[RMDB]
RNA sequence: GGGAACGACUCGAGUAGAGUCGAAAAUGUCAUGUUAAAAGAGUAUGGGGUGGAGACACUUUAUACUCUUCAGCAGUUCAUGACAGAUAGCGAAGUCACUUGAUGUGAGUACAUGAACUGCUGAACAUGUAAUAUCACGUAGUAAGUGACUUCGAGGCGUUACCACGUAUUUCGAUACGUGGUAACGAAAAGAAACAACAACAACAAC
Reactivity to DMS in 0.01 (KOAc 150mM, MgCl2 10mM, bicine 150mM(pH8.5), 24C), signal-to-noise 3, nucleotides 027 to 156: u010g010u000c000a020u000g000u000u010a080a100a040a030g020a030g020u000a020u010g010g030g020g010u010g020g020a300g010a300c010a010c020u000u000u010a020u000a030c010u010c000u000u000c000a090g020c040a060g010u000u000c010a030u000g020a170c050a060g000a140u000a070g010c070g020a030a020g000u000c010a000c010u000u000g010a110u000g010u000g010a050g020u010a060c000a020u000g010a030a100c020u000g040c030u000g020a060a130c010a020u000g010u000a070a110u000a110u000c020a020c010g040u010a130g030u000a030a030g010u000g000a020c020u000u000c000g010a080g010g010
Reactivity to 2A3 in 0.01 (KOAc 150mM, MgCl2 10mM, bicine 150mM(pH8.5), 24C), signal-to-noise 3, nucleotides 027 to 156: u120g020u030c010a000u010g030u100u140a140a110a010a010g000a010g000u000a010u000g000g000g010g000u010g000g020a030g020a010c010a010c000u000u020u010a000u010a010c010u000c020u010u000c000a000g000c010a000g010u020u010c000a010u010g050a050c050a040g090a120u230a030g100c010g000a010a000g010u010c000a020c010u030u050g050a080u180g060u010g030a030g080u080a060c000a000u000g010a040a040c000u010g020c010u020g000a000a010c000a000u000g010u030a080a060u070a050u230c020a000c020g020u050a060g090u080a080a000g000u000g000a000c000u000u000c000g000a010g020g030
An RNA of 207 nucleotides, treated with DMS and 2A3 and read out base by base. High 2A3 reactivity points to a flexible backbone, as in loops and unpaired stretches. It was measured as part of the RMDB library OK3TST. For DMS the reverse transcriptase was MarathonRT. The 2A3 profile rests on 6,947 reads.